The record gives the reactivity of an RNA of 207 nucleotides to DMS and 2A3.
It was measured as part of the RMDB library OK3TST.
Reactivities are given for positions 27 through 156.
DMS adducts were read by reverse transcription with MarathonRT.
The 2A3 profile rests on 2,552 reads.
Conditions: 150 mM KOAc, 10 mM MgCl2 and 150 mM bicine (pH 8.5), 24 C.

RNA sequence: GGGAACGACUCGAGUAGAGUCGAAAACCCCGUGUGGAACACACGACUAAGCUUCGGCUUAGUAAGAGCAACUUAGGAUCUUAGGCUCCCCGGCGUGUCUCGAACCAUGCCGGGCCAAACCCAUAGGGCUGGCGGUCCCUGUGCGGUCAGGAUUCAACAUUAUUUUAAAUUUCGAUUUAAAAUAAUGAAAAGAAACAACAACAACAAC
Reactivity to DMS in 0.01 (KOAc 150mM, MgCl2 10mM, bicine 150mM(pH8.5), 24C), signal-to-noise 1, nucleotides 027 to 156: c010c010c010c000g020u000g020u010g000g000a170a100c000a050c020a020c020g010a080c000u000a000a000g070c010u000u000c300g030g020c000u010u000a030g000u010a060a070g010a170g000c020a160a090c030u000u000a130g000g010a060u000c020u000u000a260g020g020c040u000c040c020c000c010g000g000c000g030u010g000u000c080u000c220g010a180a160c180c020a000u000g020c020c010g000g000g000c030c030a030a090a060c020c010c010a050u000a050g010g010g010c030u000g030g010c060g020g010u000c010c000c000u010g020u000g020c090g030g000u000c050a080g000g000a130u000u010c000a050a260
Reactivity to 2A3 in 0.01 (KOAc 150mM, MgCl2 10mM, bicine 150mM(pH8.5), 24C), signal-to-noise 3, nucleotides 027 to 156: c000c000c000c000g020u020g000u010g040g190a220a080c050a000c000a000c090g010a010c010u010a000a000g000c010u020u160c250g080g000c010u020u010a000g000u020a070a040g010a010g000c020a000a170c090u130u220a110g010g010a020u010c000u040u040a030g030g040c010u010c000c020c000c000g000g000c010g020u010g000u030c080u060c220g050a040a020c020c000a010u000g000c000c000g010g000g000c000c000a000a000a000c010c000c000a010u020a010g000g020g010c030u040g120g060c080g040g040u140c000c000c000u000g000u000g020c150g000g000u030c050a020g030g030a000u030u000c010a010a040